RNA sequence: GGGAACGACUCGAGUAGAGUCGAAAAAUAAGAAUGCUUGUGAUUUUUGCACAUUGAUUUUGUAUCCUGAGACUUUGCUGAAGUUGCUUAUCAGCUUAAGGAGAUUUUAUGCUGAGACUAUGGGGUUUUCUAAAUAUACAAUCAUGUCAUCUGCAAACGGAGGUAUACCAUUCGUGGUAUACCUCCGAAAAGAAACAACAACAACAAC
Reactivity to 2A3 in 0.01 (KOAc 150mM, MgCl2 10mM, bicine 150mM(pH8.5), 24C), signal-to-noise 1, nucleotides 027 to 156: a000u190a120a000g070a050a000u080g030c050u060u110g040u030g050a220u110u120u050u130u130g000c000a000c000a030u000u100g020a030u070u180u000u030g000u010a050u020c040c010u050g000a040g010a050c110u150u210u120g050c010u070g050a000a020g150u100u030g030c010u070u100a060u120c000a000g010c000u020u020a020a000g020g020a070g020a040u070u060u030u120a040u110g000c000u040g000a000g020a060c000u020a090u090g000g000g000g080u000u010u010u000c010u060a150a080a040u120a000u000a020c020a000a040u040c000a040u100g030u010c010a050u050c070u000g010c020a000a110a000

The record gives the reactivity of an RNA of 207 nucleotides to 2A3. Values are in units of 0.01, from 0 to 300, in steps of 10. Reactivities are given for positions 27 through 156.